[RMDB]
An RNA of 177 nucleotides, treated with DMS and read out base by base. Source: RMDB library OK2TST, as collected in RNAgym. The RNA was probed in 150 mM KOAc, 10 mM MgCl2 and 150 mM bicine (pH 8.5) at 24 C.

RNA sequence: GGGAACGACUCGAGUAGAGUCGAAAAGAGCGGGGCUGGCUCUGAAGUGUGGACUGGGGCUCAACCGUGAUUACCCCGCCCGGCACGCCCGCUGCACCGCGUCGCUCAGACUCGCCAGGGUGGGCUGGACCGCGUAUCGAUUCGUCGAUACGCGGUCAAAAGAAACAACAACAACAAC
Reactivity to DMS in 0.01 (KOAc 150mM, MgCl2 10mM, bicine 150mM(pH8.5), 24C), signal-to-noise 1, nucleotides 027 to 126: g000a270g000c030g000g000g010g080c150u010g000g000c000u000c060u030g060a160a030g030u020g030u010g000g020a060c030u000g000g000g010g000c040u000c140a160a190c020c080g000u000g030a100u010u000a280c050c000c000c050g010c000c120c010g030g030c060a120c140g000c030c000c020g040c100u000g080c040a180c170c060g010c170g070u000c050g000c180u050c190a100g000a070c030u000c000g000c060c000a300g030g010g030u000g030g020g010c030u010g030